[RMDB]
RNA sequence: GGGAACGACUCGAGUAGAGUCGAAAAAAAAGUAAGCAAUAAACUAAGCAUACAGGUCGACACAUCUCUGUUCCGUCAUACGUAUACGGAAGAAAGUCGCGACCGGAAGUUUUACGACACCUGGGAAGCUAAUACUUUAAUUCGUUAAAGUAUUAGCAAAAGAAACAACAACAACAAC
Reactivity to DMS in 0.01 (KOAc 150mM, MgCl2 10mM, bicine 150mM(pH8.5), 24C), signal-to-noise 9, nucleotides 027 to 126: a040a040a050a090g010u000a040a060g020c040a090a070u030a050a060a060c130u020a090a110g020c070a120u010a080c100a080g000g010u010c000g010a090c070a040c070a200u010c040u000c020u000g010u020u000c010c000g020u000c150a130u030a110c290g010u030a090u020a030c020g000g000a040a010g010a040a030a060g000u000c180g010c030g000a030c000c010g010g020a080a060g000u000u010u010u000a060c080g010a080c100a090c030c010u010g010g000g010a090a110
Reactivity to 2A3 in 0.01 (KOAc 150mM, MgCl2 10mM, bicine 150mM(pH8.5), 24C), signal-to-noise 9, nucleotides 027 to 126: a000a000a000a000g110u120a060a020g020c080a060a120u150a230a070a030c100u110a080a030g050c010a030u100a140c030a050g000g030u030c010g110a060c000a000c000a160u040c030u000c010u070g180u080u000c010c000g000u010c060a070u100a210c080g110u240a060u050a150c000g020g010a010a010g010a020a070a000g020u050c060g000c010g030a000c000c000g000g010a020a010g000u020u030u040u090a040c050g010a010c020a020c040c020u050g020g030g070a070a010

Structure probing data (DMS and 2A3) for a 177-nucleotide construct. Values are in units of 0.01, from 0 to 300, in steps of 10. For DMS the reverse transcriptase was MarathonRT. The reactions ran in a buffer of 150 mM KOAc, 10 mM MgCl2 and 150 mM bicine (pH 8.5), at 24 C. It was measured as part of the RMDB libraries RFM100 and RFMREP.